Background: The record gives the reactivity of an RNA of 207 nucleotides to 2A3 and DMS. 2A3 is a SHAPE reagent: it acylates the 2'-hydroxyl of flexible nucleotides of all four kinds. For DMS the reverse transcriptase was MarathonRT. For 2A3 the reverse transcriptase was SuperScript II with manganese. For 2A3, 4,591 sequencing reads were counted.
RNA sequence: GGGAACGACUCGAGUAGAGUCGAAAAGACACUUAAGUUCGCUUAAGUGUCAAAAAAGAUAUGGAACCAGACAGGGAGCGUGCCAUCGGAAACGAUGGAAACGCGAAGAACUGUCGGUUCCUAAGUCAAAAAACCCCUCAUCUUCGGAUGAGGGGAAUCCAUGUAAGAGAUUCGUCUCUUACAUGGAAAAAGAAACAACAACAACAAC
Reactivity to 2A3 in 0.01 (KOAc 150mM, MgCl2 10mM, bicine 150mM(pH8.5), 24C), signal-to-noise 4, nucleotides 027 to 156: g010a000c000a000c040u000u010a010a000g030u060u140c190g070c170u000u010a000a010g010u010g000u000c000a010a010a000a000a010a010g000a000u010a000u030g000g000a000a000c040c080a120g010a010c010a000g010g060g010a220g030c000g010u000g020c000c000a000u000c000g000g010a000a000a000c000g000a000u010g010g010a100a060a010c010g000c010g020a060a030g040a030a000c000u000g000u000c000g000g000u000u000c000c000u000a000a000g000u000c020a020a040a030a080a160a200c000c060c070c010u000c000a000u000c000u020u080c300g130g000a000u000g000a000g000g000g000g000a000a000
Reactivity to DMS in 0.01 (KOAc 150mM, MgCl2 10mM, bicine 150mM(pH8.5), 24C), signal-to-noise 2, nucleotides 027 to 156: g020a030c000a000c030u000u000a010a050g030u000u010c300g010c020u000u000a010a020g030u000g020u000c000a000a000a070a110a070a120g010a070u000a040u000g000g000a000a020c000c010a240g040a040c000a030g000g020g050a080g050c010g060u000g000c000c000a000u010c000g020g020a050a020a060c000g000a000u000g020g000a000a010a030c010g050c020g000a060a110g020a110a300c010u000g000u010c010g020g000u000u010c010c000u000a000a060g000u000c000a000a110a100a090a060a150c010c000c010c020u000c000a000u000c020u010u010c300g050g010a010u010g010a010g010g030g000g000a000a000